An RNA of 177 nucleotides, treated with DMS and 2A3 and read out base by base.
The reactions ran in a buffer of 150 mM KOAc, 10 mM MgCl2 and 150 mM bicine (pH 8.5), at 24 C.
It was measured as part of the RMDB library OK2TRN.

RNA sequence: GGGAACGACUCGAGUAGAGUCGAAAACUGUCACUGACACUGAGUCACACACUCACAGACACUGUCUGUGUCUCAGUCUGUCAGUGUGAGACUCAGAGUGACUGUGUCAGUGUCUCUCAGUCAGUGAGGAGGUAAAAGGAUUCGUCCUUUUACCUCCAAAAGAAACAACAACAACAAC
Reactivity to DMS in 0.01 (KOAc 150mM, MgCl2 10mM, bicine 150mM(pH8.5), 24C), signal-to-noise 7, nucleotides 027 to 126: c020u010g010u000c010a010c000u010g000a090c150a150c120u000g000a010g010u010c010a130c020a010c010a090c030u000c190a010c000a010g000a070c020a240c130u000g000u010c070u010g000u010g010u000c040u010c060a110g000u000c020u000g010u000c180a020g020u000g020u000g000a050g010a020c010u000c010a030g010a050g020u010g010a120c050u000g010u000g010u010c070a060g010u000g000u000c070u000c020u010c060a110g010u000c060a060g010u000g010a170
Reactivity to 2A3 in 0.01 (KOAc 150mM, MgCl2 10mM, bicine 150mM(pH8.5), 24C), signal-to-noise 4, nucleotides 027 to 126: c020u030g020u040c010a000c000u000g030a020c010a010c090u010g010a000g000u020c000a010c000a000c000a000c040u000c000a010c000a010g020a010c020a020c100u090g080u140c050u070g230u060g130u150c030u000c040a090g090u020c000u040g150u070c010a050g010u000g000u010g020a020g000a000c000u000c010a010g010a020g060u060g050a050c040u030g020u000g030u020c070a040g010u000g020u030c000u000c000u010c040a050g140u030c000a020g000u000g060a050